[RMDB]
RNA sequence: GGGAACGACUCGAGUAGAGUCGAAAAGAUAUGGAGAUGAACUACAGCCUCCGACUGCUAUGAAGUCGGAAACGAUGGAGCAGGGGAGGCUGCAUCUCCUAAGUCAAAACCAUCGUUCGCGAUGGAAUCCAAGAUGAACCUUCGGGUUCAUCUUGGAAAAAGAAACAACAACAACAAC
Reactivity to 2A3 in 0.01 (KOAc 150mM, MgCl2 10mM, bicine 150mM(pH8.5), 24C), signal-to-noise 1, nucleotides 027 to 126: g030a010u050a080u180g070g000a030g010a030u020g060a100a040c140u160a110c240a030g000c060c010u000c000c030g300a300c030u010g040c010u040a240u300g020a050a040g030u010c010g030g000a100a000a000c010g020a000u010g020g070a000g010c000a000g000g010g030g000a000g000g000c010u000g020c010a010u010c000u000c050c000u010a060a010g020u000c060a060a020a170a100c000c000a010u010c010g030u140u090c300g050c010g200a000u020g000g000a030a100
Reactivity to DMS in 0.01 (KOAc 150mM, MgCl2 10mM, bicine 150mM(pH8.5), 24C), signal-to-noise 1, nucleotides 027 to 126: g030a020u020a300u020g000g030a040g010a050u000g000a090a040c060u010a280c000a060g000c000c020u000c000c000g050a200c010u000g020c000u000a160u010g000a110a300g000u000c000g000g010a020a030a030c010g000a010u000g000g010a000g000c000a000g000g000g000g000a000g020g000c020u000g000c010a000u030c030u010c030c030u000a050a090g030u000c000a070a110a100a250c000c000a000u000c000g020u000u000c230g010c020g000a010u000g000g020a070a070